RNA sequence: GGGAACGACUCGAGUAGAGUCGAAAAGAAAGAUAGAAAGAAGCCGGCUCUGCUAGUUUCACGGCAACCACGUUGAAAUUACAACGAAAGAAGCUCGCACUCAACUUCAACGGCUUAACGAGUGCAAAAAAGAAGUAUCACUUCGGUGAUACUUCAACACUAUCUAAUUGUUCGCAAUUAGAUAGUGAAAAGAAACAACAACAACAAC
Reactivity to DMS in 0.01 (KOAc 150mM, MgCl2 10mM, bicine 150mM(pH8.5), 24C), signal-to-noise 1, nucleotides 027 to 156: g030a210a110a160g000a250u000a130g010a230a040a180g000a110a230g050c110c060g040g000c030u010c010u010g030c030u000a010g020u000u000u000c000a070c000g040g000c040a110a050c070c000a110c010g060u060u000g030a080a060a150u000u000a210c020a010a030c030g010a040a040a180g020a110a150g000c050u010c070g070c010a050c030u000c040a160a300c010u000u000c010a080a090c080g000g000c000u010u000a010a080c300g000a040g010u000g000c010a000a070a070a060a030a100g010a050a010g020u000a000u000c020a010c070u000u000c200g030g080u000g010a000u000a010c000u000u000c000a000a160
Reactivity to 2A3 in 0.01 (KOAc 150mM, MgCl2 10mM, bicine 150mM(pH8.5), 24C), signal-to-noise 3, nucleotides 027 to 156: g090a030a090a010g070a050u190a060g100a040a220a020g060a070a000g090c050c020g040g020c030u010c030u040g020c010u010a020g030u030u030u100c100a050c020g040g000c040a050a120c020c010a020c020g000u020u020g040a100a100a120u200u110a100c010a040a020c010g060a060a050a070g010a010a000g010c080u160c200g000c020a010c010u000c000a080a080c010u030u010c030a100a030c040g030g000c020u050u060a030a000c020g000a000g000u000g000c000a120a000a000a000a030a000g000a000a000g000u000a000u000c000a000c030u040u070c140g080g000u000g000a000u000a000c000u000u000c000a000a000
Overview
This 207-nucleotide RNA was probed chemically with DMS and 2A3. For 2A3, 2,823 sequencing reads were counted. DMS adducts were read by reverse transcription with MarathonRT. The reactions ran in a buffer of 150 mM KOAc, 10 mM MgCl2 and 150 mM bicine (pH 8.5), at 24 C. The data come from the RNA Mapping Database (RMDB), library M2RFPK.